[RMDB]
RNA sequence: GGGAACGACUCGAGUAGAGUCGAAAAGAUAUGGAGACGUAGAGCGAUAAGUCGCGGUCGGAAACGACCGGCGACUUUUGACGCUUGAAGUCUCCUAAGUCAAAACUGAAGGGUUCGCCCUUCAGAACAUGCUUUUGCAGUUCGCUGCAAAAGCAUGAAAAGAAACAACAACAACAAC
Reactivity to DMS in 0.01 (KOAc 150mM, MgCl2 10mM, bicine 150mM(pH8.5), 24C), signal-to-noise 2, nucleotides 027 to 126: g020a060u030a300u000g030g010a000g020a010c000g000u000a300g000a010g030c020g020a190u000a000a010g000u000c010g040c020g020g050u010c000g010g030a130a090a210c030g000a000c000c050g050g080c130g000a000c000u010u000u000u000g000a200c110g010c000u000u010g010a110a300g000u000c000u010c000c000u000a010a090g010u000c040a030a060a110a080c000u000g030a030a000g020g000g010u010u010c260g010c000c000c000u000u020c000a000g000a130a190